Structure probing data (2A3 and DMS) for a 177-nucleotide construct. 2A3 adducts were read by reverse transcription with SuperScript II with manganese. For 2A3, 1,288 sequencing reads were counted. Source: RMDB library RFM100, as collected in RNAgym. The reactions ran in a buffer of 150 mM KOAc, 10 mM MgCl2 and 150 mM bicine (pH 8.5), at 24 C. DMS adducts were read by reverse transcription with MarathonRT. The DMS profile rests on 1,382 reads.
RNA sequence: GGGAACGACUCGAGUAGAGUCGAAAAAUACAGGCAACCGACACUCUGCGCCUCUUUGAGCUGACGAUAACCGUGAGGUUGGCGACGCGAAAUAGUCACGAGGCCAUCGGUUCAUGCCCGGUAAGGCCCAGAAACUGACGUUCGCGUCAGUUUCUGGAAAAGAAACAACAACAACAAC
Reactivity to 2A3 in 0.01 (KOAc 150mM, MgCl2 10mM, bicine 150mM(pH8.5), 24C), signal-to-noise 1, nucleotides 027 to 126: a000u040a010c000a010g060g030c000a000a000c000c000g000a010c020a030c080u110c070u140g040c060g000c100c060u070c050u200u060u090g150a050g010c010u040g140a060c000g090a100u050a050a020c060c020g070u100g080a080g050g060u010u030g020g000c020g010a060c030g030c020g030a020a070a050u130a060g080u050c020a010c180g010a020g010g000c000c000a010u000c000g070g000u030u000c040a040u090g010c000c000c000g000g000u030a060a110g070g030c010
Reactivity to DMS in 0.01 (KOAc 150mM, MgCl2 10mM, bicine 150mM(pH8.5), 24C), signal-to-noise 2, nucleotides 027 to 126: a090u000a060c100a120g010g030c000a100a100c060c100g000a080c270a090c100u000c100u040g030c060g010c000c000u040c010u060u100u050g000a110g030c080u000g080a090c120g000a080u000a070a050c070c000g000u030g050a120g010g010u000u000g000g000c090g010a120c060g000c100g000a080a100a000u000a140g010u050c000a210c210g000a180g000g000c000c000a120u050c000g000g000u070u000c050a070u000g030c140c000c080g010g000u010a030a140g000g000c040